Conditions: 150 mM KOAc, 10 mM MgCl2 and 150 mM bicine (pH 8.5), 24 C. The record gives the reactivity of an RNA of 207 nucleotides to DMS and 2A3. It was measured as part of the RMDB library M2RFPK.
RNA sequence: GGGAACGACUCGAGUAGAGUCGAAAAUGGACUUUUUACAGUUCCUACUUAUCCGGUUUUAACGCUGUUUUAUUGGCGCAAAGGUUUACGGAUACACAACUAAUAAUUAAACCUUUUGUGUGCGAAAAUUGGACGUUUAGGUUCGCCUAAACGUCAACAUAGUCCAUUGAUUCGUCAAUGGACUAUGAAAAGAAACAACAACAACAAC
Reactivity to DMS in 0.01 (KOAc 150mM, MgCl2 10mM, bicine 150mM(pH8.5), 24C), signal-to-noise 3, nucleotides 027 to 156: u000g020g000a060c040u010u000u010u000u010a090c140a120g030u000u000c010c010u010a090c110u000u010a010u000c000c000g010g000u000u000u000u000a180a100c020g000c000u000g030u010u010u000u000a170u010u020g010g000c010g040c020a020a060a030g080g020u000u000u000a150c000g010g010a060u000a060c150a210c070a080a160c130u000a100a140u000a110a130u000u010a010a020a010c010c000u000u000u010u000g000u000g020u000g000c020g000a090a050a070a240u000u000g010g010a020c000g030u000u000u000a020g010g030u000u010c300g030c000c000u010a000a010a020c000g030u000c010a020a080
Reactivity to 2A3 in 0.01 (KOAc 150mM, MgCl2 10mM, bicine 150mM(pH8.5), 24C), signal-to-noise 5, nucleotides 027 to 156: u120g020g000a030c050u090u100u100u160u210a100c190a040g020u110u110c010c000u010a060c040u090u060a030u000c000c010g020g020u000u000u020u070a070a030c030g000c030u040g170u120u160u060u180a130u140u240g030g000c020g000c020a000a020a020g000g000u020u010u000a000c010g000g010a010u070a070c080a010c010a190a150c060u210a060a120u120a190a040u160u120a010a000a010c000c000u020u020u060u110g070u010g000u030g060c100g100a080a060a070a130u110u110g090g010a000c000g000u000u000u000a010g000g020u020u020c140g040c010c000u010a000a000a000c000g000u000c000a000a000